[RMDB]
Annotation
Structure probing data (DMS and 2A3) for a 177-nucleotide construct. For 2A3 the reverse transcriptase was SuperScript II with manganese. It was measured as part of the RMDB library OK2TST. Reactivities are given for positions 27 through 126.
RNA sequence: GGGAACGACUCGAGUAGAGUCGAAAAGUGAAGACCGAUGGUCAAAGGAGCACCAAGAACCACUUCAAAGCCCAUAAAACCUUGCUUGUGAAGGGUUGGGUUUCGGUUGCCCACAAUGUAGUCACCAUGAUGACACUAGUUUCGACUAGUGUCAUCAAAAAGAAACAACAACAACAAC
Reactivity to DMS in 0.01 (KOAc 150mM, MgCl2 10mM, bicine 150mM(pH8.5), 24C), signal-to-noise 4, nucleotides 027 to 126: g000u020g000a090a120g010a040c030c060g000a090u000g020g020u010c030a060a120a180g010g020a110g000c070a070c030c050a070a150g000a120a060c060c050a070c060u010u000c050a070a050a090g010c010c200c080a110u010a060a050a060a080c090c050u010u000g010c070u000u000g030u010g000a040a060g000g000g030u000u000g010g000g000u000u000u000c050g000g000u000u000g020c080c020c010a070c120a060a090u020g010u000a060g000u000c050a050c050c090a150
Reactivity to 2A3 in 0.01 (KOAc 150mM, MgCl2 10mM, bicine 150mM(pH8.5), 24C), signal-to-noise 2, nucleotides 027 to 126: g060u050g030a070a030g020a010c000c030g000a170u080g000g010u040c040a000a040a080g090g020a040g010c070a040c140c010a010a010g030a040a030c030c020a160c050u030u030c040a050a030a050g000c000c000c090a050u210a030a140a000a020c000c040u060u100g030c020u170u110g130u110g270a070a020g050g000g030u040u020g000g000g000u010u010u010c010g000g050u020u060g000c000c000c000a010c030a060a150u170g060u130a040g030u020c000a000c100c010a030